[RMDB]
RNA sequence: GGGAACGACUCGAGUAGAGUCGAAAACAAGCCUUUGCAUAUGACACAUACAUCAUUCAAACAAACCAAUAACAAAUCAAAACAUGAUGCUAUUGGCUACGAAUUACAAGGUUCGACACCUGUCGUCAUUUCUGAUGCAAUUCGUUGCAUCAGAAAUAAAAGAAACAACAACAACAAC
Reactivity to DMS in 0.01 (KOAc 150mM, MgCl2 10mM, bicine 150mM(pH8.5), 24C), signal-to-noise 3, nucleotides 027 to 126: c120a090a080g010c070c020u010u000u010g020c030a060u020a050u000g000a060c100a060c110a040u010a110c090a040u010c040a050u000u000c090a070a080a110c100a150a090a080c000c000a010a030u000a010a030c030a050a130a080u010c020a030a060a080a100c290a070u010g010a060u000g010c020u010a020u000u000g010g000c020u000a080c180g000a060a040u000u000a030c140a040a050g020g020u000u010c030g000a060c100a120c030c020u000g000u000c060g020u020c130
Reactivity to 2A3 in 0.01 (KOAc 150mM, MgCl2 10mM, bicine 150mM(pH8.5), 24C), signal-to-noise 4, nucleotides 027 to 126: c020a020a000g040c000c030u040u050u060g010c050a060u130a040u190g040a030c020a000c010a160u190a100c010a070u080c020a020u030u100c050a030a120a130c020a050a090a020c080c000a030a020u080a040a040c090a070a180a090u090c040a020a050a060a190c070a100u130g020a010u040g010c010u030a010u050u020g000g000c020u050a020c050g040a040a030u080u040a070c030a120a040g050g000u030u050c010g050a010c020a030c120c010u050g050u110c020g080u060c020